[RMDB]
RNA sequence: GGGAACGACUCGAGUAGAGUCGAAAAGCUCAACGCUUCGGCGUUGAGCAAAGAAAAUCCGUGCCAAGGGCUGGGUAGGGACGCACGGAAACCCACCGCCCAAAACUGAGAGGUUCGCCUCUCAGAAGUAGUAUUCAAGGUUCGCCUUGAAUACUACAAAAGAAACAACAACAACAAC
Reactivity to DMS in 0.01 (KOAc 150mM, MgCl2 10mM, bicine 150mM(pH8.5), 24C), signal-to-noise 3, nucleotides 027 to 126: g000c000u000c000a010a020c010g040c020u000u010c160g050g030c000g040u000u000g010a010g010c010a010a030a090g000a090a050a090a090u000c010c000g030u000g000c040c180a100a140g010g000g020c030u020g010g010g020u000a090g020g000g000a180c150g000c040a020c040g000g000a030a130a060c000c000c000a090c120c070g010c000c000c030a040a060a080a130c040u000g010a010g010a010g020g020u000u010c240g020c010c000u000c000u000c000a000g010a080a080
Reactivity to 2A3 in 0.01 (KOAc 150mM, MgCl2 10mM, bicine 150mM(pH8.5), 24C), signal-to-noise 3, nucleotides 027 to 126: g000c010u010c000a000a010c000g000c020u060u080c280g120g000c010g010u000u000g000a000g020c000a000a000a000g030a000a070a000a030u020c010c010g030u040g040c020c040a130a130g060g020g000c080u150g050g020g110u130a130g060g020g020a020c040g000c020a060c050g050g000a040a030a020c000c000c000a010c020c000g040c000c000c000a030a050a000a030c000u010g000a000g000a010g030g020u050u090c250g090c040c000u000c000u000c010a000g000a010a010